The record gives the reactivity of an RNA of 177 nucleotides to 2A3 and DMS. 2A3 adducts were read by reverse transcription with SuperScript II with manganese. For DMS, 3,784 sequencing reads were counted. DMS adducts were read by reverse transcription with MarathonRT. The reactions ran in a buffer of 150 mM KOAc, 10 mM MgCl2 and 150 mM bicine (pH 8.5), at 24 C. The 2A3 profile rests on 1,490 reads.
[RMDB]
RNA sequence: GGGAACGACUCGAGUAGAGUCGAAAAGCAUAGCGUCAAGUUGGUUGACCAGAAGUCUGGUUAGCAAACAGAGUAUAACCAAAAGGUUAGACGCACUCUGUGAAAAAGUACGAAAGUACAAAGAUAAGUCCCUAAACAUAUUCGUAUGUUUAGGGACAAAAGAAACAACAACAACAAC
Reactivity to 2A3 in 0.01 (KOAc 150mM, MgCl2 10mM, bicine 150mM(pH8.5), 24C), signal-to-noise 2, nucleotides 027 to 126: g060c050a060u100a110g020c000g050u040c110a150a030g050u060u060g080g010u030u010g070a010c000c000a000g020a300a030g190u080c000u000g000g000u030u010a000g000c000a070a060a020c000a000g140a020g120u120a060u050a100a010c000c030a180a170a120a100g020g020u010u020a010g010a000c030g000c040a000c030u020c010u040g000u020g020a260a000a030a030a000g000u010a010c030g050a010a020a050g000u000a010c020a070a050a030g140a050u170a120a060
Reactivity to DMS in 0.01 (KOAc 150mM, MgCl2 10mM, bicine 150mM(pH8.5), 24C), signal-to-noise 4, nucleotides 027 to 126: g010c120a110u010a080g010c030g030u000c040a120a130g010u010u000g010g040u010u000g000a020c010c000a030g020a300a140g010u000c010u000g010g020u000u000a020g000c010a070a050a030c000a060g010a070g000u000a140u000a020a030c000c010a080a070a120a150g020g010u000u000a010g000a050c050g020c060a100c040u000c050u000g020u000g000a050a070a090a100a090g020u010a000c010g020a120a050a130g010u000a010c010a060a090a110g010a110u010a080a140